[RMDB]
RNA sequence: GGGAACGACUCGAGUAGAGUCGAAAAGAUAUGGACGUGAACUACUUGCCGAUGCUCGAAGAACUCGGAAACGAGGGAGAGCUAAGGCAAGCACGUCCUAAGUCAAAUCAGCACUUCGGUGCUGAAAGACAAGUUAAUCCUUCGGGAUUAACUUGUCAAAAGAAACAACAACAACAAC
Reactivity to DMS in 0.01 (KOAc 150mM, MgCl2 10mM, bicine 150mM(pH8.5), 24C), signal-to-noise 3, nucleotides 027 to 126: g000a050u010a300u000g000g010a010c000g010u000g000a080a040c070u010a300c010u000u000g010c010c000g010a190u010g030c020u000c000g000a120a150g020a100a230c000u000c020g000g010a100a070a160c000g010a010g000g010g000a080g010a030g020c010u010a120a210g000g000c010a010a010g000c000a010c010g000u000c000c000u000a000a090g010u000c030a100a100a130u000c010a000g000c000a000c010u010u020c250g020g010u000g000c010u000g000a000a070a140
Reactivity to 2A3 in 0.01 (KOAc 150mM, MgCl2 10mM, bicine 150mM(pH8.5), 24C), signal-to-noise 3, nucleotides 027 to 126: g030a010u060a040u140g010g000a000c010g030u010g040a080a090c080u170a050c010u300u000g000c000c010g060a050u270g010c000u030c020g240a300a050g000a080a030c010u000c010g010g050a110a020a020c010g000a010g000g000g020a030g000a000g000c010u010a030a000g000g010c000a000a000g000c010a000c000g000u000c000c000u010a060a000g000u000c010a020a030a150u040c000a000g000c010a000c010u090u120c300g160g010u010g000c000u010g000a020a020a010